[RMDB]
RNA sequence: GGGAACGACUCGAGUAGAGUCGAAAAGAAAGUGUCUUACCGUUGUGAAUAUUGAGGCAUAUCGAAUCGGCGAGUCAUCGUUUCGGUCGUCCUUUGUUUGGUUGGCGAUACGAUUGUUACUCUUCUACUCAUGUUCUCUGUUCGCAGAGAACAUGAGAAAAGAAACAACAACAACAAC
Reactivity to 2A3 in 0.01 (KOAc 150mM, MgCl2 10mM, bicine 150mM(pH8.5), 24C), signal-to-noise 1, nucleotides 027 to 126: g060a000a050a010g020u020g000u050c020u030u050a050c020c020g130u040u170g140u140g080a130a030u100a090u120u150g000a020g000g000c000a000u020a020u050c000g090a110a050u000c010g030g000c000g030a020g090u030c010a060u020c050g030u060u030u020c020g030g010u050c010g000u000c010c000u020u140u110g140u080u080u080g070g030u010u060g030g000c070g000a040u020a100c080g030a200u040u090g030u060u000a060c040u000c000u040u050c020u070a080
Reactivity to DMS in 0.01 (KOAc 150mM, MgCl2 10mM, bicine 150mM(pH8.5), 24C), signal-to-noise 1, nucleotides 027 to 126: g000a100a100a100g000u000g010u000c000u000u010a100c090c070g020u000u020g000u010g030a140a070u010a110u000u000g000a040g000g000c060a030u010a080u000c030g000a090a120u000c060g050g000c060g010a100g020u000c090a080u000c020g020u020u000u000c030g010g060u000c050g000u000c000c020u000u000u020g020u000u000u000g020g030u000u000g010g020c050g010a040u020a040c020g010a070u000u000g020u020u000a060c170u000c050u000u000c050u010a080
Notes: The data come from the RNA Mapping Database (RMDB), library RFMREP. The record gives the reactivity of an RNA of 177 nucleotides to 2A3 and DMS. The RNA was probed in 150 mM KOAc, 10 mM MgCl2 and 150 mM bicine (pH 8.5) at 24 C. For DMS the reverse transcriptase was MarathonRT. For 2A3 the reverse transcriptase was SuperScript II with manganese.